[RMDB]
RNA sequence: GGGAACGACUCGAGUAGAGUCGAAAAGAAACGCAAGGCCGCUGACCGACGGGAUAUUGUGGGGCUUACCACAGGGGACGCGGCGUUAUCACUUGCCUUUUAAGCCGACCGACUGGGCUGCAUACAAACCACCCAACUAUCUUCGGAUAGUUGGGAAUCCAGUACAUCUGUUCGCAGAUGUACUGGAAAAAGAAACAACAACAACAAC
Reactivity to 2A3 in 0.01 (KOAc 150mM, MgCl2 10mM, bicine 150mM(pH8.5), 24C), signal-to-noise 2, nucleotides 027 to 156: g000a000a000a000c020g010c020a000a020g210g010c000c000g010c040u080g040a070c010c010g060a040c140g090g030g020a060u060a080u150u110g040u060g030g030g030g000c120u130u100a120c000c000a000c010a070g000g000g010g020a000c050g000c040g040g110c020g020u000u020a030u040c000a000c140u000u020g000c020c010u010u080u000u110a070a000g010c000c020g050a050c000c060g060a060c050u050g030g080g000c020u000g030c030a030u010a230c060a080a010a050c030c040a030c000c030c000a000a000c010u000a000u000c000u000u030c070g060g000a000u000a000g000u000u000g000g010g000a000a000
Reactivity to DMS in 0.01 (KOAc 150mM, MgCl2 10mM, bicine 150mM(pH8.5), 24C), signal-to-noise 1, nucleotides 027 to 156: g010a080a050a070c030g010c030a050a100g000g000c010c000g090c040u010g000a300c040c010g000a190c080g010g010g000a170u000a080u000u020g000u000g040g000g010g000c190u020u000a060c000c000a030c040a110g000g000g000g010a270c180g020c060g040g020c040g000u010u000a080u030c090a220c010u000u000g020c000c040u000u000u000u020a040a140g030c040c010g000a150c090c060g020a100c040u030g020g010g030c020u000g010c030a030u000a120c060a050a030a150c040c060a160c000c000c000a010a010c000u000a000u000c000u000u010c300g020g010a050u000a010g000u010u000g000g000g000a000a010

Conditions: 150 mM KOAc, 10 mM MgCl2 and 150 mM bicine (pH 8.5), 24 C. The record gives the reactivity of an RNA of 207 nucleotides to 2A3 and DMS. For DMS the reverse transcriptase was MarathonRT. Source: RMDB library M2RFPK, as collected in RNAgym.